Notes:
The record gives the reactivity of an RNA of 177 nucleotides to 2A3 and DMS. The RNA was probed in 150 mM KOAc, 10 mM MgCl2 and 150 mM bicine (pH 8.5) at 24 C.
RNA sequence: GGGAACGACUCGAGUAGAGUCGAAAAGUGUGCUUUUCAUAGGUGCCUGAUGAUUAAUCUCUGUUUGUUGGGUGCGGCCCAUUAAAUAGUCCAAGGAGACAGAAAAAUAGUCUGCUAUUUUUAAAAGACUUAGUGGGAUGUUCGCAUCCCACUAAGUAAAAGAAACAACAACAACAAC
Reactivity to 2A3 in 0.01 (KOAc 150mM, MgCl2 10mM, bicine 150mM(pH8.5), 24C), signal-to-noise 2, nucleotides 027 to 126: g080u060g040u030g040c010u050u120u110u050c050a060u200a200g010g050u070g010c040c070u060g050a040u010g030a030u150u140a090a070u050c060u000c060u070g040u170u160u030g070u030u070g010g000g030u030g100c040g080g000c000c000c000a020u060u040a050a080a000u030a010g020u000c020c070a010a010g140g040a060g050a030c080a070g130a010a100a110a040a050u020a020g020u080c090u070g130c040u000a050u060u000u000u070u070a120a150a020a000g030
Reactivity to DMS in 0.01 (KOAc 150mM, MgCl2 10mM, bicine 150mM(pH8.5), 24C), signal-to-noise 2, nucleotides 027 to 126: g000u040g010u010g030c010u000u000u030u040c060a160u030a110g030g010u050g030c010c000u000g040a130u030g000a100u060u050a100a070u040c000u000c030u010g000u000u010u010g000u030u000g000g020g000u030g000c060g000g000c000c000c030a040u010u000a030a040a030u030a050g000u060c040c090a020a110g000g000a070g020a070c100a090g020a030a120a040a070a050u000a030g010u000c130u050g020c000u000a010u010u020u000u010u000a050a050a160a090g000

Record summary:
DMS adducts were read by reverse transcription with MarathonRT. For 2A3 the reverse transcriptase was SuperScript II with manganese. Values cover nucleotides 27 to 126. Source: RMDB library RFM100, as collected in RNAgym.